[RMDB]
RNA sequence: GGGAACGACUCGAGUAGAGUCGAAAAUCACGUGUGUAAUGUCCCUAUCCGUGAUAUUAUGCACAGGUAUGUAAGGAUAGAUAGACUACAUACUGCAUUAGUCAGUAGUCUACAAGAACUGACUGAAGAUAGUAAUCAGAUUCGUCUGGUUACUAUCAAAAGAAACAACAACAACAAC
Reactivity to DMS in 0.01 (KOAc 150mM, MgCl2 10mM, bicine 150mM(pH8.5), 24C), signal-to-noise 9, nucleotides 027 to 126: u020c060a080c160g010u010g010u000g010u000a010a010u010g010u000c000c050c070u030a120u050c270c180g010u010g000a010u000a010u000u000a020u000g000c020a020c030a150g010g010u000a020u010g010u010a050a070g010g010a120u030a110g010a180u020a070g010a090c010u000a010c010a040u010a030c010u010g010c190a110u020u020a010g010u010c060a060g010u000a060g010u010c050u030a070c200a110a120g000a070a060c040u000g000a050c010u000g000a110a120
Reactivity to 2A3 in 0.01 (KOAc 150mM, MgCl2 10mM, bicine 150mM(pH8.5), 24C), signal-to-noise 9, nucleotides 027 to 126: u130c040a050c150g010u010g000u000g000u010a020a010u020g020u010c030c020c030u070a180u120c100c060g040u080g050a000u000a010u020u010a000u020g020c010a010c020a030g030g020u030a010u030g020u030a050a130g070g040a070u100a100g100a060u110a050g120a090c000u000a000c000a010u020a000c010u050g040c050a090u050u110a020g000u010c010a000g010u050a030g080u060c050u090a140c090a080a070g020a040a010c010u020g020a000c010u030g020a070a020

Conditions: 150 mM KOAc, 10 mM MgCl2 and 150 mM bicine (pH 8.5), 24 C. An RNA of 177 nucleotides, treated with DMS and 2A3 and read out base by base. DMS adducts were read by reverse transcription with MarathonRT. 2A3 adducts were read by reverse transcription with SuperScript II with manganese. Reactivities are given for positions 27 through 126.